The record gives the reactivity of an RNA of 177 nucleotides to 2A3 and DMS. Conditions: 150 mM KOAc, 10 mM MgCl2 and 150 mM bicine (pH 8.5), 24 C. It was measured as part of the RMDB library OK1LIB. DMS adducts were read by reverse transcription with MarathonRT. The DMS profile rests on 3,254 reads.
[RMDB]
RNA sequence: GGGAACGACUCGAGUAGAGUCGAAAAAUAUGUUGCACCAAUACUUCUAAUUGUAUUGCUAAUACUGUAUGGGCCAUCAAUCAUCAGGCUUAUACUAAAAUUCCGGAGACUCAGAGGUGUGGCCCGACCACUCUGUUAGGUUCGCCUAACAGAGUGGAAAAGAAACAACAACAACAAC
Reactivity to 2A3 in 0.01 (KOAc 150mM, MgCl2 10mM, bicine 150mM(pH8.5), 24C), signal-to-noise 3, nucleotides 027 to 126: a000u250a090u190g070u040u060g070c020a000c000c000a000a000u020a000c020u040u180c070u230a170a170u110u160g000u010a000u020u040g070c080u110a090a050u080a160c050u070g020u050a080u080g010g020g010c020c010a070u080c060a050a230u070c100a080u100c030a060g000g000c000u020u050a010u050a080c060u060a020a120a060a100u110u050c040c000g090g000a050g020a020c050u050c110a030g020a000g040g010u020g000u000g090g030c000c000c020g020a020
Reactivity to DMS in 0.01 (KOAc 150mM, MgCl2 10mM, bicine 150mM(pH8.5), 24C), signal-to-noise 3, nucleotides 027 to 126: a090u040a040u000g000u020u000g000c210a120c280c000a010a010u040a010c010u020u010c180u020a060a060u000u000g000u000a010u000u000g030c110u000a050a100u010a030c090u040g020u030a060u040g000g020g010c010c000a060u000c130a040a120u010c100a180u010c130a080g000g000c050u050u000a010u020a030c080u010a040a110a070a050u000u020c040c040g020g010a070g000a050c090u010c090a080g000a040g040g010u000g020u010g000g000c020c000c030g050a170